Chemical mapping of a 177-nucleotide RNA with 2A3 and DMS.
For 2A3, 5,953 sequencing reads were counted.
RNA sequence: GGGAACGACUCGAGUAGAGUCGAAAAAUAAAGGCUACCCAGUAGACAUUGACGGAUCACCCGAUCCCGUCAUGUGUGGCGUAUGCGGUCAAGAGGACGAACUAACUGACCCACGACCCGACCCCGGCUUUGAUCAGAUAUUCGUAUCUGAUCAAAGAAAAGAAACAACAACAACAAC
Reactivity to 2A3 in 0.01 (KOAc 150mM, MgCl2 10mM, bicine 150mM(pH8.5), 24C), signal-to-noise 4, nucleotides 027 to 126: a000u130a010a070a020g100g000c030u030a050c020c050c050a040g060u080a050g030a030c010a050u030u190g000a000c000g000g000a000u020c020a090c100c070c080g010a010u030c090c070c040g000u010c000a010u020g030u020g040u050g030g000c050g020u090a060u180g040c120g020g020u010c020a040a030g020a060g090g050a050c110g120a210a070c090u040a070a020c020u020g030a030c000c030c000a020c040g100a140c000c010c020g050a070c000c000c010c000g070g010
Reactivity to DMS in 0.01 (KOAc 150mM, MgCl2 10mM, bicine 150mM(pH8.5), 24C), signal-to-noise 7, nucleotides 027 to 126: a110u010a070a100a110g010g010c030u000a040c010c020c030a130g010u010a110g010a060c020a020u010u000g010a010c010g000g010a050u000c030a150c300c190c300g000a030u010c110c020c030g020u000c000a010u000g010u000g010u000g010g000c090g010u000a040u000g020c110g010g020u010c030a030a070g010a190g010g010a160c120g010a090a130c060u010a060a190c080u000g010a040c010c010c040a080c100g000a110c020c010c030g000a170c040c000c000c030g000g000
2A3 adducts were read by reverse transcription with SuperScript II with manganese. Values cover nucleotides 27 to 126. The RNA was probed in 150 mM KOAc, 10 mM MgCl2 and 150 mM bicine (pH 8.5) at 24 C. For DMS, 7,837 sequencing reads were counted.